Structure probing data (2A3 and DMS) for a 177-nucleotide construct. Conditions: 150 mM KOAc, 10 mM MgCl2 and 150 mM bicine (pH 8.5), 24 C. The data come from the RNA Mapping Database (RMDB), library OK2TST.
[RMDB]
RNA sequence: GGGAACGACUCGAGUAGAGUCGAAAAGUUGAACUGUAUCGACAGCUAAAGGCCUGCGGCGGUACCGUGCCGGCGUGUAGUUGUCCGACAGUAUCGGUGCUGUUCCAGCCGUUCGGAAAUCUAAGCAGGCAGUAAUAUUAUUCGUAAUAUUACUGCCAAAAGAAACAACAACAACAAC
Reactivity to 2A3 in 0.01 (KOAc 150mM, MgCl2 10mM, bicine 150mM(pH8.5), 24C), signal-to-noise 3, nucleotides 027 to 126: g070u080u120g030a080a040c040u060g010u100a100u130c020g030a020c030a030g000c020u050a120a040a030g050g030c010c000u030g030c010g050g010c000g000g070u080a070c070c030g020u030g010c000c040g000g010c050g050u060g030u040a090g010u030u090g070u080c040c070g020a020c010a010g020u050a080u060c000g010g000u020g000c010u030g020u040u000c010c010a020g000c010c000g000u040u050c040g020g050a040a040a080u120c030u110a070a040g030c030a050
Reactivity to DMS in 0.01 (KOAc 150mM, MgCl2 10mM, bicine 150mM(pH8.5), 24C), signal-to-noise 8, nucleotides 027 to 126: g020u000u000g000a080a100c090u010g010u010a100u010c080g010a060c050a060g010c010u000a030a130a110g000g010c040c010u000g000c030g020g020c010g010g010u000a080c080c080g010u000g020c010c040g010g000c210g010u000g010u000a040g000u000u010g010u010c100c080g010a040c040a030g000u010a100u000c010g010g020u000g000c030u000g010u000u000c030c030a190g010c010c010g010u000u010c200g010g000a050a060a090u000c070u000a080a110g020c140a150